[RMDB]
RNA sequence: GGGAACGACUCGAGUAGAGUCGAAAAAUAGCAGGUAGAGAGAGAGACAGGAAGGUGCUCAGAUGGACUAUGUGCUGUAAGGCACAUACGAAAGAGGAAUUCCUAGUAAGUGUGUAUCAACAAUGGACAUCAUUGCCUUGUUCGCAAGGCAAUGAUGAAAAGAAACAACAACAACAAC
Reactivity to 2A3 in 0.01 (KOAc 150mM, MgCl2 10mM, bicine 150mM(pH8.5), 24C), signal-to-noise 5, nucleotides 027 to 126: a000u130a020g000c040a010g030g000u100a040g020a000g000a010g000a010g000a000g010a040c020a010g040g010a040a000g070g020u090g030c020u000c010a070g020a160u070g030g000a010c010u010a000u000g020u000g000c010u040g060u160a070a060g110g000c040a000c000a010u030a020c050g060a030a030a030g060a010g020g050a020a030u040u010c000c000u020a040g080u050a060a120g030u030g010u020g010u080a060u130c030a030a080c010a080a110u060g050g000a020
Reactivity to DMS in 0.01 (KOAc 150mM, MgCl2 10mM, bicine 150mM(pH8.5), 24C), signal-to-noise 4, nucleotides 027 to 126: a100u020a070g010c050a050g000g020u010a040g010a100g000a060g010a060g010a080g010a050c090a060g000g010a070a030g010g010u010g010c070u000c060a080g020a170u000g010g010a200c240u000a010u010g000u000g000c010u010g020u050a080a100g010g010c000a000c000a010u000a020c030g020a150a090a050g010a060g010g010a110a110u000u010c010c010u000a070g020u030a040a070g020u010g020u000g020u010a030u020c140a060a050c190a060a050u010g010g010a270
Annotation
This 177-nucleotide RNA was probed chemically with 2A3 and DMS. For DMS the reverse transcriptase was MarathonRT. Source: RMDB libraries RFM100 and RFMREP, as collected in RNAgym.